Source: RMDB library OK2TRN, as collected in RNAgym. An RNA of 177 nucleotides, treated with 2A3 and DMS and read out base by base. Reactivities are rounded to 0.1 and cut off at 0 and 3.
RNA sequence: GGGAACGACUCGAGUAGAGUCGAAAAAGAAUACUGUCCUGUUGAGGCAGUCAUCGCGUCACACUCUCCAAGAUUUGCUCUUACAAAUGGAGUUAUUUUCGCCAAUUGUAUAAAUACAAUUUGUAGGAAUGAAAGUCUCAUUCGUGAGACUUUCAUUAAAAGAAACAACAACAACAAC
Reactivity to 2A3 in 0.01 (KOAc 150mM, MgCl2 10mM, bicine 150mM(pH8.5), 24C), signal-to-noise 2, nucleotides 027 to 126: a000g060a010a000u110a100c040u000g030u110c010c030u120g120u140u230g120a190g030g000c010a000g000u030c010a030u040c010g060c030g110u070c000a020c000a020c050u050c020u040c060c000a040a000g000a120u020u030u100g000c000u040c010u080u070a050c070a060a090a080u100g020g000a000g030u000u040a140u040u080u040u110c030g000c000c050a020a040u050u000g010u010a090u040a250a260a030u070a010c020a030a040u040u010u050g040u050a100g010g170
Reactivity to DMS in 0.01 (KOAc 150mM, MgCl2 10mM, bicine 150mM(pH8.5), 24C), signal-to-noise 3, nucleotides 027 to 126: a060g000a200a080u010a070c050u000g000u000c010c020u010g020u020u010g020a140g030g010c010a020g000u000c100a050u000c050g010c060g020u010c070a070c110a050c060u010c020u010c030c050a090a090g000a190u000u000u000g010c060u000c060u000u000a200c080a030a080a060u000g010g010a070g000u000u000a060u000u000u000u000c010g030c050c070a040a030u000u000g010u000a090u000a070a060a090u000a030c010a030a040u010u000u010g010u000a120g000g000